[RMDB]
RNA sequence: GGGAACGACUCGAGUAGAGUCGAAAAAUGGUCUGAACCCACUGAGCGUUACCUAGGUACUUCGAGGAGUACUCGGACUGGGACCGGUUCGGUACUCGGUUACCGUCCCACUCAAUGAGCUCGGCAAGGAUCAUCCGGCGCUGCUCCGCAGUGGCCAGACUAUGUAGAAAUUCGUUUCUACAUAGUCAAAAGAAACAACAACAACAAC
Reactivity to 2A3 in 0.01 (KOAc 150mM, MgCl2 10mM, bicine 150mM(pH8.5), 24C), signal-to-noise 4, nucleotides 027 to 156: a000u020g010g000u010c010u040g100a170a140c010c000c000a010c030u030g000a010g010c020g080u160u210a140c020c030u070a090g000g060u020a030c020u030u050c050g120a160g090g030a010g040u020a010c010u030c110g030g010a030c050u060g010g000g070a080c100c110g000g020u040u060c030g020g030u090a090c080u070c170g070g010u150u050a040c000c010g010u010c010c010c000a030c020u080c010a050a220u170g020a050g010c000u000c000g010g010c030a040a050g020g000a010u010c000a010u050c070c070g000g000c000g000c000u010g010c020u050c200c200g000c010a000g000u040g180g010c000c000a000
Reactivity to DMS in 0.01 (KOAc 150mM, MgCl2 10mM, bicine 150mM(pH8.5), 24C), signal-to-noise 3, nucleotides 027 to 156: a070u000g020g020u010c020u020g020a040a060c000c000c010a040c020u010g010a010g030c000g020u000u010a070c100c060u000a120g030g020u000a030c040u000u010c080g020a180g030g040a070g030u010a010c000u010c040g020g020a020c020u020g040g020g010a040c060c020g040g000u010u000c060g030g020u000a050c030u010c040g030g040u000u000a040c000c010g010u000c010c010c020a040c020u000c040a050a010u020g020a030g010c010u000c020g020g010c070a120a180g010g000a110u000c020a140u010c060c060g010g000c020g020c000u000g000c010u010c060c120g040c010a050g030u000g000g000c000c020a120